[RMDB]
Annotation: Structure probing data (DMS and 2A3) for a 207-nucleotide construct. The RNA was probed in 150 mM KOAc, 10 mM MgCl2 and 150 mM bicine (pH 8.5) at 24 C. For DMS the reverse transcriptase was MarathonRT. For 2A3, 4,482 sequencing reads were counted. Values cover nucleotides 27 to 156.
RNA sequence: GGGAACGACUCGAGUAGAGUCGAAAAGUAAGUUACGAUUAUGUGACUAGCCAUAAUCGAUGAAGGUACUCGACUUCAUCGUAACUUAGAAUUGUCAGUGCGUACUGGCUAGUCACAGUACGGCAGACUACACUCCUAGUCUGCCACUGACUAGGAGACCUAGUAGUCCAUUCGUGGACUACUAGGUAAAAGAAACAACAACAACAAC
Reactivity to DMS in 0.01 (KOAc 150mM, MgCl2 10mM, bicine 150mM(pH8.5), 24C), signal-to-noise 3, nucleotides 027 to 156: g000u000a030a040g000u000u000a070c020g000a130u000u010a100u020g000u000g010a040c010u000a020g090c050c030a070u010a150a090u010c040g010a050u000g000a030a040g010g010u000a130c200u000c090g000a120c010u000u000c030a060u000c000g020u000a020a060c080u000u000a140g020a140a170u000u010g010u010c060a140g000u010g010c010g010u010a110c150u000g010g030c030u000a020g000u000c010a050c020a020g000u000a040c040g010g020c010a090g010a040c020u000a040c060a200c060u000c050c020u000a020g000u010c010u010g010c060c050a010c030u000g000a010c010u010a040g020g000a060g000
Reactivity to 2A3 in 0.01 (KOAc 150mM, MgCl2 10mM, bicine 150mM(pH8.5), 24C), signal-to-noise 5, nucleotides 027 to 156: g060u100a080a010g010u030u060a020c040g030a180u110u050a080u200g000u000g000a000c000u000a000g000c000c000a080u130a080a080u120c020g000a010u010g010a020a000g030g010u120a110c040u020c100g100a040c020u010u000c000a000u000c000g020u010a010a030c030u050u110a040g140a180a150u160u170g080u120c080a050g120u050g250c090g050u080a030c060u020g000g000c000u000a000g000u000c000a000c000a000g000u000a010c000g020g060c040a010g010a040c000u020a020c070a020c040u010c010c000u000a000g010u000c010u040g070c020c000a010c010u010g000a000c000u000a010g000g030a010g010